The data come from the RNA Mapping Database (RMDB), library OK3TST.
Structure probing data (DMS and 2A3) for a 207-nucleotide construct.
RNA sequence: GGGAACGACUCGAGUAGAGUCGAAAAGAACAUUGACCGAUGUAAAGCCAGCAGUGGCAGUGUUAGAGCCCACCGCCGUGGACAAAGGAGCCAUGAAGUAGACGGACGCAGUGAGCGCCUUGAAAGAUGAUAUCAAUCCCUCUGAUGUCCGGAGUAAAAUAGUCGUAAUGUUCGCAUUACGACUAUUAAAAGAAACAACAACAACAAC
Reactivity to DMS in 0.01 (KOAc 150mM, MgCl2 10mM, bicine 150mM(pH8.5), 24C), signal-to-noise 3, nucleotides 027 to 156: g020a090a030c020a040u000u010g020a110c010c020g000a130u000g010u010a090a100a150g020c100c000a100g000c050a100g030u010g020g000c030a060g030u010g030u000u010a150g010a220g010c060c020c010a080c040c060g000c070c060g020u000g020g010a070c030a070a110a200g000g000a090g030c030c010a040u000g010a070a150g010u000a080g020a100c020g010g010a040c010g020c030a130g040u000g010a150g010c040g040c000c010u000u010g010a090a090a140g000a100u000g020a090u000a250u000c010a070a120u000c020c020c010u000c030u010g000a130u000g010u000c020c030g060g010a110g020u000a060a070
Reactivity to 2A3 in 0.01 (KOAc 150mM, MgCl2 10mM, bicine 150mM(pH8.5), 24C), signal-to-noise 3, nucleotides 027 to 156: g070a000a010c020a030u020u100g080a200c010c020g040a010u030g040u110a160a070a030g090c030c040a030g010c040a040g020u070g050g000c010a000g000u010g020u050u090a070g000a040g100c000c000c010a010c000c020g040c030c030g040u070g010g010a010c010a020a180a040g070g000a030g010c000c000a040u090g030a060a000g040u080a020g020a080c050g020g000a010c020g000c010a030g020u020g170a100g030c080g020c050c030u030u050g040a040a020a010g100a050u160g020a030u060a020u160c030a080a070u070c010c040c000u010c020u000g070a090u040g040u000c010c020g030g010a040g010u150a030a070
DMS adducts were read by reverse transcription with MarathonRT.